[RMDB]
RNA sequence: GGGAACGACUCGAGUAGAGUCGAAAAAUAUGACUUACUAUCAACUAAUGCUCCUGUGGAAGGGUCAAAAACUCUUAAAUGAAGUCCUGCGCUAAAUGUUUGACUUCCAACAGGAUUAUCCUGAAAUUUAACGUACGGUCCUGCUGUAGAAAGCGGGCUGUAAGUGGAAGUUCGCUUCCACUUACAGAAAAGAAACAACAACAACAAC
Reactivity to 2A3 in 0.01 (KOAc 150mM, MgCl2 10mM, bicine 150mM(pH8.5), 24C), signal-to-noise 2, nucleotides 027 to 156: a000u110a060u080g080a080c030u060u070a030c020u070a080u190c070a060a050c060u150a140a060u080g040c000u010c010c000u030g000u010g000g050a030a050g030g030g040u020c060a000a050a010a030a050c040u090c020u090u090a130a190a150u210g020a030a010g010u020c020c080u110g010c040g000c110u160a200a100a060u150g010u070u070u090g020a030c010u000u000c030c030a070a090c000a030g010g000a010u020u030a050u050c010c030u020g010a020a120a140u180u200u100a080a040c060g020u070a020c080g010g010u070c000c010u020g000c000u000g010u070a060g070a120a100a000g000c000g000g010g010
Reactivity to DMS in 0.01 (KOAc 150mM, MgCl2 10mM, bicine 150mM(pH8.5), 24C), signal-to-noise 1, nucleotides 027 to 156: a080u000a090u000g010a080c020u010u010a050c070u000a110u000c030a160a090c100u010a090a120u000g020c110u000c000c000u000g030u010g050g000a070a090g000g000g020u000c010a070a080a080a210a050c020u010c010u000u000a140a100a120u010g020a080a100g000u020c010c070u010g010c000g040c040u010a020a090a090u000g020u000u000u050g010a120c080u000u000c040c030a050a110c040a000g030g010a210u000u000a020u000c030c040u000g000a060a120a100u030u000u020a030a070c060g010u000a030c080g000g000u010c030c020u000g070c000u000g040u000a140g000a030a140a080g030c030g030g000g080
This 207-nucleotide RNA was probed chemically with 2A3 and DMS. For DMS the reverse transcriptase was MarathonRT. Reactivities are given for positions 27 through 156. Conditions: 150 mM KOAc, 10 mM MgCl2 and 150 mM bicine (pH 8.5), 24 C.